[RMDB]
RNA sequence: GGGAACGACUCGAGUAGAGUCGAAAACCUGUUCACACCUAACAUACGUGGACUGGCUUGUUUACUCAUAGUGUCUACUCUAGCCUAUGCUGCUACCAAAUUUGCAGAGCACUCUCUUGCUACAAUGUAUUAAGUUACGCUUCGGCGUAACUUAAUAAAAAGAAACAACAACAACAAC
Reactivity to 2A3 in 0.01 (KOAc 150mM, MgCl2 10mM, bicine 150mM(pH8.5), 24C), signal-to-noise 3, nucleotides 027 to 126: c000c010u000g030u040u030c020a020c020a010c030c040u100a180a060c050a120u230a100c090g020u020g020g000a000c040u070g040g000c030u120u100g050u180u280u140a110c050u040c040a060u050a150g060u030g080u130c030u040a070c020u010c030u110a040g000c000c010u050a050u090g030c040u030g010c020u050a070c020c060a070a120a170u160u180u080g020c050a000g010a030g020c020a020c020u080c010u000c020u060u110g020c030u050a060c040a070a110u150g040
Reactivity to DMS in 0.01 (KOAc 150mM, MgCl2 10mM, bicine 150mM(pH8.5), 24C), signal-to-noise 2, nucleotides 027 to 126: c000c000u010g020u010u010c020a030c020a120c150c070u000a090a120c220a130u020a100c140g020u010g000g000a060c010u000g000g020c040u010u000g010u000u000u000a070c050u010c040a090u000a070g020u010g020u000c010u000a060c050u010c070u000a100g020c010c040u000a070u010g010c050u000g010c030u000a080c050c080a070a090a150u010u010u000g000c050a040g000a070g010c090a080c190u000c060u000c030u010u000g020c020u010a090c140a070a060u010g010

The data come from the RNA Mapping Database (RMDB), library OK2TST. The record gives the reactivity of an RNA of 177 nucleotides to 2A3 and DMS. For 2A3 the reverse transcriptase was SuperScript II with manganese. For DMS, 3,574 sequencing reads were counted. The reactions ran in a buffer of 150 mM KOAc, 10 mM MgCl2 and 150 mM bicine (pH 8.5), at 24 C. Values cover nucleotides 27 to 126. Reactivities are rounded to 0.1 and cut off at 0 and 3. For DMS the reverse transcriptase was MarathonRT.